Chemical mapping of a 177-nucleotide RNA with DMS and 2A3. The 2A3 profile rests on 19,255 reads.

[RMDB]
RNA sequence: GGGAACGACUCGAGUAGAGUCGAAAAAGAGCUGGUUGCCCUAAGCAGAUCUCUGGACGAAUCGAUGGAGCAAGCUUGCCAGGCAAUAUAUCGGCCGGCAUAGUUCUGGACUAUGCAGCAAUUGCUCUAUACAAAGCCUAUUCGUAGGCUUUGUAUAAAAAGAAACAACAACAACAAC
Reactivity to DMS in 0.01 (KOAc 150mM, MgCl2 10mM, bicine 150mM(pH8.5), 24C), signal-to-noise 9, nucleotides 027 to 126: a040g010a060g000c030u000g010g010u010u010g010c030c020c050u020a090a110g010c030a050g010a100u020c030u000c020u010g010g010a130c150g010a090a090u020c090g010a140u040g000g000a020g000c050a070a070g010c090u010u010g020c030c160a150g010g010c010a050a060u030a100u030a080u040c190g000g000c010c020g020g000c010a010u000a000g000u000u020c160u020g020g010a060c000u010a010u000g000c010a100g000c040a070a060u010u010g000c010u000c020
Reactivity to 2A3 in 0.01 (KOAc 150mM, MgCl2 10mM, bicine 150mM(pH8.5), 24C), signal-to-noise 9, nucleotides 027 to 126: a000g080a010g010c040u040g060g030u080u080g030c020c000c010u040a080a020g040c020a020g020a130u030c030u000c020u060g060g030a060c050g090a090a080u150c050g040a090u150g020g000a010g010c020a040a030g050c020u030u050g020c020c020a040g010g000c020a080a010u110a010u030a080u300c090g060g000c010c010g010g000c000a000u010a000g020u070u080c140u260g030g020a010c010u010a010u040g000c010a010g010c010a020a040u050u060g000c000u000c000
Values cover nucleotides 27 to 126.